[RMDB]
RNA sequence: GGGAACGACUCGAGUAGAGUCGAAAAAUGCCGUAGCAUGCAUUACGGCGCGCUAUAUAGCCGGCUACGUAUAGCAUCGGCCGUAUACGCGGCUAGCUACGGCGCAUUACGUAAUCGAUCGUAGCUAAACUCUCCUGGCAUUCGUGCCAGGAGAGUUAAAAGAAACAACAACAACAAC
Reactivity to 2A3 in 0.01 (KOAc 150mM, MgCl2 10mM, bicine 150mM(pH8.5), 24C), signal-to-noise 1, nucleotides 027 to 126: a010u180g010c020c000g000u000a010g000c030a040u090g000c000a020u090u230a050c030g000g020c010g020c000g000c010u020a010u000a020u020a100g010c030c000g020g040c010u110a040c100g270u180a110u110a240g030c010a090u110c070g080g000c000c020g010u010a030u010a040c100g040c030g000g070c000u000a040g020c000u000a000c020g000g000c000g000c000a010u040u110a010c020g020u050a020a110u140c090g010a050u010c010g020u010a000g000c060u060a140
Reactivity to DMS in 0.01 (KOAc 150mM, MgCl2 10mM, bicine 150mM(pH8.5), 24C), signal-to-noise 2, nucleotides 027 to 126: a050u010g010c000c010g020u000a000g030c020a210u000g000c150a090u010u000a080c040g000g000c020g010c040g020c130u000a000u010a010u000a070g010c020c000g010g000c000u000a050c300g000u010a110u010a040g030c030a130u020c040g010g020c030c010g040u000a000u010a080c100g000c000g040g000c040u020a250g000c000u000a000c000g000g000c000g000c080a100u130u000a050c110g020u000a060a060u010c090g000a040u000c060g020u000a030g050c170u000a110